Conditions: 150 mM KOAc, 10 mM MgCl2 and 150 mM bicine (pH 8.5), 24 C. An RNA of 177 nucleotides, treated with DMS and 2A3 and read out base by base. The data come from the RNA Mapping Database (RMDB), library RFMREP. The DMS profile rests on 1,658 reads. DMS (dimethyl sulfate) methylates the pairing face of unpaired adenines and cytosines.

RNA sequence: GGGAACGACUCGAGUAGAGUCGAAAACCUGGGAAUGCAUGGCCAGUGACACAAGUGAGAAUUGGAUGUUAUGACCGUCCAGAAAAGACAAGAUGAGAAAGUGCAGUAUUGACUGUCUUCAAACGCAGAGAAGGGAUUAGUUCGCUAAUCCCUUCUCAAAAGAAACAACAACAACAAC
Reactivity to DMS in 0.01 (KOAc 150mM, MgCl2 10mM, bicine 150mM(pH8.5), 24C), signal-to-noise 2, nucleotides 027 to 126: c030c000u000g010g010g010a140a050u010g010c050a050u000g000g000c040c000a060g000u000g010a070c050a060c060a070a070g000u000g010a110g020a030a140u010u020g020g000a080u000g020u000u000a070u010g030a070c160c020g030u000c000c010a080g010a070a020a090a090g000a040c090a060a060g010a110u000g010a200g000a040a050a010g010u010g010c050a020g010u000a050u020u010g000a050c000u000g000u000c030u010u000c040a010a080a090c210g000c210a060
Reactivity to 2A3 in 0.01 (KOAc 150mM, MgCl2 10mM, bicine 150mM(pH8.5), 24C), signal-to-noise 1, nucleotides 027 to 126: c020c010u030g000g000g000a140a020u160g070c010a030u020g020g000c050c000a040g070u070g090a040c040a020c030a080a090g110u250g050a110g030a090a220u130u020g070g000a000u000g030u060u140a100u180g070a120c040c020g020u000c000c040a030g070a080a090a000a000g030a010c100a050a000g100a090u090g000a030g060a070a070a010g060u090g140c010a040g040u090a080u100u140g080a020c000u010g010u040c000u040u000c030a110a110a040c250g070c090a010